An RNA of 177 nucleotides, treated with 2A3 and DMS and read out base by base. Reactivities are rounded to 0.1 and cut off at 0 and 3. It was measured as part of the RMDB libraries RFM100 and RFMREP. The reactions ran in a buffer of 150 mM KOAc, 10 mM MgCl2 and 150 mM bicine (pH 8.5), at 24 C.

[RMDB]
RNA sequence: GGGAACGACUCGAGUAGAGUCGAAAAAUUGCCGAAAGGUUGGGUGAAAAGCGUAGCUGCAGCCCCUGAUGUUCUCCACUGCUAGGGUCAGAGAGCGUCGUGUCGAGCGCAGCAAAGCCAAGACGCCAUCGGUGCGUAAAUUCGUUUACGCACCGAUAAAAGAAACAACAACAACAAC
Reactivity to 2A3 in 0.01 (KOAc 150mM, MgCl2 10mM, bicine 150mM(pH8.5), 24C), signal-to-noise 2, nucleotides 027 to 126: a020u080u100g030c020c000g040a020a030a040g180g010u090u070g050g000g000u040g050a080a000a000a000g000c020g040u100a000g000c020u000g010c020a080g020c030c000c000c030u070g030a020u010g020u000u000c010u010c010c030a060c020u070g070c070u210a100g110g040g050u080c050a020g020a000g000a020g000c000g020u010c010g020u020g030u110c050g040a020g060c000g010c000a010g010c010a050a020a000g050c000c000a070a010g070a030c020g000c010c000
Reactivity to DMS in 0.01 (KOAc 150mM, MgCl2 10mM, bicine 150mM(pH8.5), 24C), signal-to-noise 3, nucleotides 027 to 126: a130u030u000g000c000c030g010a090a120a100g010g000u000u020g040g000g000u000g000a080a060a150a110g020c010g010u010a250g000c010u000g000c010a100g030c010c010c030c030u000g000a050u010g000u010u000c010u000c030c300a050c040u020g000c120u020a080g000g000g000u020c200a070g000a050g010a020g010c000g030u000c000g010u000g000u040c130g010a110g000c030g000c010a000g000c050a030a100a260g000c000c020a050a100g010a210c170g020c010c000